RNA sequence: GGGAACGACUCGAGUAGAGUCGAAAAGGGAAGAACGUCUUGGUGAUAGCCCCCACCAGCUCCGGUAAGACCGAGACCGCGGUAUUACCCGUGUUCUCCAUGGUACGUGAGCUCGACGAGCCUGGGACUUGAAACUCCUUUUCGAAGGAGUUUCAAGAAAAGAAACAACAACAACAAC
Reactivity to 2A3 in 0.01 (KOAc 150mM, MgCl2 10mM, bicine 150mM(pH8.5), 24C), signal-to-noise 1, nucleotides 027 to 126: g020g000g030a050a100g010a160a050c000g000u010c010u180u050g040g000u000g020a150u250a300g080c020c030c050c040c000a030c000c010a010g040c000u000c030c020g000g020u050a100a050g040a010c020c030g000a000g020a020c010c000g000c040g000g010u070a220u120u150a050c010c000c020g000u020g000u030u010c000u000c020c040a050u150g040g000u030a010c030g100u130g030a040g000c000u020c020g030a020c000g000a020g060c000c000u040g040g000g020a040
Reactivity to DMS in 0.01 (KOAc 150mM, MgCl2 10mM, bicine 150mM(pH8.5), 24C), signal-to-noise 3, nucleotides 027 to 126: g000g010g000a100a060g000a040a070c090g010u000c020u000u000g000g020u000g010a150u000a110g000c050c010c010c260c000a080c050c010a070g020c020u000c010c040g000g010u010a080a150g000a050c060c060g010a040g000a020c040c030g030c010g020g010u010a090u000u010a090c220c000c030g010u000g000u000u000c000u000c000c220a090u010g000g000u000a080c030g000u010g000a020g000c030u000c110g020a070c030g020a130g010c040c020u000g000g010g030a220